[RMDB]
RNA sequence: GGGAACGACUCGAGUAGAGUCGAAAAGAUAUGGAACUGUGCGAGACGUGGGUCGGAAACGACCUUAUCGUCGAUGAGCAUUUCCUAAGUCAAAACACAGAAACUGAGUUCGCUCAGUUUCUGUGAACUGAAUUAGACAGUUCGCUGUCUAAUUCAGAAAAGAAACAACAACAACAAC
Reactivity to DMS in 0.01 (KOAc 150mM, MgCl2 10mM, bicine 150mM(pH8.5), 24C), signal-to-noise 7, nucleotides 027 to 126: g000a030u000a300u010g000g000a010a010c210u000g010u000g000c050g010a230g000a020c000g030u000g000g010g010u000c000g010g000a060a080a180c000g020a010c000c000u000u010a040u010c000g030u000c000g000a140u010g000a220g010c010a020u000u000u000c000c000u000a060a190g010u000c030a080a060a100a200c010a000c000a000g000a010a000a010c000u000g000a020g020u000u000c260g010c000u000c000a010g000u000u000u010c000u000g010u000g000a040a130
Reactivity to 2A3 in 0.01 (KOAc 150mM, MgCl2 10mM, bicine 150mM(pH8.5), 24C), signal-to-noise 4, nucleotides 027 to 126: g010a020u070a050u120g000g000a020a010c090u070g010u050g060c060g060a120g000a080c000g010u040g000g020g000u000c000g000g040a050a050a030c010g000a000c000c010u010u070a140u120c010g020u000c020g030a060u120g030a030g000c000a010u010u000u010c000c000u010a110a020g030u030c030a000a020a160a110c010a000c000a020g010a010a000a000c000u010g010a000g010u090u130c210g090c130u000c000a000g000u000u000u000c000u000g000u000g000a000a000

The record gives the reactivity of an RNA of 177 nucleotides to DMS and 2A3. For DMS, 9,535 sequencing reads were counted. For 2A3, 15,558 sequencing reads were counted.